[RMDB]
RNA sequence: GGGAACGACUCGAGUAGAGUCGAAAAGCAGGACGUCAUACAGCAGGCUGGUUCCUUCGGCUGGGUCUGGGCCGCGGGGAUGAGAUCCACGGACUAGCAUUCUGCGUAUCUUGUCGCUUCUAAGCGCAGAGUGCGAAACCUAAAGGAAUGCGACUGAGUAACUAUUGAACUUCGGUUCAAUAGUUACAAAAGAAACAACAACAACAAC
Reactivity to DMS in 0.01 (KOAc 150mM, MgCl2 10mM, bicine 150mM(pH8.5), 24C), signal-to-noise 2, nucleotides 027 to 156: g000c050a050g020g030a120c070g030u000c050a180u010a050c060a080g020c020a070g020g020c060u000g010g060u010u000c020c000u010u000c030g040g050c030u010g000g010g020u000c060u010g040g030g020c000c010g050c110g000g000g010g000a130u000g000a150g020a140u010c080c040a070c040g000g000a060c030u000a220g000c030a040u000u010c020u000g010c000g080u000a080u000c010u020u000g000u000c000g010c000u000u000c020u000a110a250g020c000g000c000a000g020a040g090u000g000c000g000a070a060a070c080c050u000a110a110a130g010g000a060a110u000g030c020g000a270c020u020g010a300
Reactivity to 2A3 in 0.01 (KOAc 150mM, MgCl2 10mM, bicine 150mM(pH8.5), 24C), signal-to-noise 3, nucleotides 027 to 156: g040c050a020g060g050a020c030g020u060c020a050u080a200c020a040g020c010a010g020g020c010u070g050g000u020u050c020c000u030u050c020g020g000c010u030g000g030g000u010c030u030g010g020g000c040c010g000c040g000g000g000g030a070u160g070a030g020a070u110c100c050a060c060g000g000a020c000u010a020g020c010a000u010u000c000u000g000c010g000u040a070u070c020u020u060g010u000c010g000c010u030u040c010u070a060a020g000c000g000c000a000g000a000g010u010g010c000g000a020a000a010c000c030u120a120a100a020g100g010a030a040u190g000c000g000a000c000u010g000a000
Overview
An RNA of 207 nucleotides, treated with DMS and 2A3 and read out base by base. Source: RMDB library ARCHII, as collected in RNAgym. The 2A3 profile rests on 4,150 reads. Conditions: 150 mM KOAc, 10 mM MgCl2 and 150 mM bicine (pH 8.5), 24 C.